Source information:
Source: RMDB library OK3TST, as collected in RNAgym. Chemical mapping of a 207-nucleotide RNA with 2A3. Reactivities are given for positions 27 through 156. 2A3 adducts were read by reverse transcription with SuperScript II with manganese.
RNA sequence: GGGAACGACUCGAGUAGAGUCGAAAAAGUCUGGAGGUCACUACUUGAGACAGCGAGGACCCGCACCUCCUCUCACGUGCCGCUAAGAGAGUAAUGCGGCACGACUCUCUAGGUGCGGGUGAGAGGAGUCUCAAGACCUCGUUGUGACCUCCAGACACUUCUCUGCUGAUUUCGAUCAGCAGAGAAGAAAAGAAACAACAACAACAAC
Reactivity to 2A3 in 0.01 (KOAc 150mM, MgCl2 10mM, bicine 150mM(pH8.5), 24C), signal-to-noise 2, nucleotides 027 to 156: a000g030u000c020u000g000g000a000g000g000u000c010a000c050u110a010c010u040u050g000a010g030a020c010a020g120c050g100a100g010g080a040c020c010c000g000c000a000c020c000u070c020c010u020c010u020c020a060c040g010u010g010c000c030g000c040u040a090a020g110a030g010a010g130u050a040a090u080g000c010g010g000c010a010c000g000a010c000u100c020u020c030u060a030g010g020u010g000c010g010g000g010u010g000a010g000a010g030g070a080g010u010c010u000c010a000a010g050a000c010c050u070c030g020u030u010g010u000g000a000c000c030u000c000c000a000g000a000c000a000